[RMDB]
RNA sequence: GGGAACGACUCGAGUAGAGUCGAAAAGAAUAGGGCGUUUGUAGUGGCAUGUUCUAGACCCGAAGCGGAGUGAUCUACCCAUGGCCAGGGUGAAGCGACGGUAAGACGUCGUGGAGGCCCGAACCCACCUAGGUCAGCCAUUCGUGGCUGACCUAGGAAAAGAAACAACAACAACAAC
Reactivity to 2A3 in 0.01 (KOAc 150mM, MgCl2 10mM, bicine 150mM(pH8.5), 24C), signal-to-noise 2, nucleotides 027 to 126: g090a030a120u150a110g020g030g040c070g010u010u090u080g140u080a090g020u150g050g010c040a000u000g010u000u010c070u050a020g000a050c040c010c000g020a050a000g040c000g020g050a030g010u070g000a020u030c020u090a030c030c010c020a070u060g010g010c000c090a010g000g000g010u090g050a030a010g000c000g000a010c000g000g000u010a060a050g060a100c000g010u000c000g000u020g000g000a010g060g000c000c000c000g010a020a000c000c000c000a050
Reactivity to DMS in 0.01 (KOAc 150mM, MgCl2 10mM, bicine 150mM(pH8.5), 24C), signal-to-noise 1, nucleotides 027 to 126: g000a040a020u010a030g000g000g000c010g000u000u010u010g030u010a060g060u010g050g040c070a040u020g000u000u060c000u000a050g000a130c010c030c030g080a150a130g000c060g000g020a270g000u070g000a050u020c000u000a080c030c000c100a050u000g000g010c170c170a300g000g020g000u000g000a240a250g010c050g000a040c000g000g030u000a040a050g010a170c010g070u000c010g030u000g000g000a210g000g000c030c010c000g010a030a100c160c000c130a230